Chemical mapping of a 207-nucleotide RNA with 2A3. 2A3 adducts were read by reverse transcription with SuperScript II with manganese. For 2A3, 716 sequencing reads were counted.

RNA sequence: GGGAACGACUCGAGUAGAGUCGAAAACAGAGCUGAUGGGCCAUGUACCUAUCCAAAAUGAGAUCCCAUCUUGCACACUGUGCUAAUUUGAGAUUCUCAUGCCUCCUACUUGGAGAGAUCUGGACGACUAACUGUAUGACGUUCGCGUCAUACAGAACGUUGGAGACGAGUUCGCUCGUCUCCAACGAAAAGAAACAACAACAACAAC
Reactivity to 2A3 in 0.01 (KOAc 150mM, MgCl2 10mM, bicine 150mM(pH8.5), 24C), signal-to-noise 2, nucleotides 027 to 156: c010a000g000a010g020c080u080g020a030u070g000g020g000c110c060a140u150g070u200a150c000c010u070a040u000c010c060a060a120a040a040u030g020a020g000a040u040c030c000c000a000u000c000u040u030g000c020a020c020a090c250u250g000u010g030c040u130a010a060u070u010u050g030a040g020a040u220u020c000u000c000a000u060g020c000c000u000c000c000u130a290c120u130u120g010g000a010g000a000g040a020u000c040u080g030g010a010c060g010a040c090u170a210a000c020u020g000u010a000u020g000a000c000g000u010u060c270g000c020g150u000c000a000u000a000c000a000g000a000a050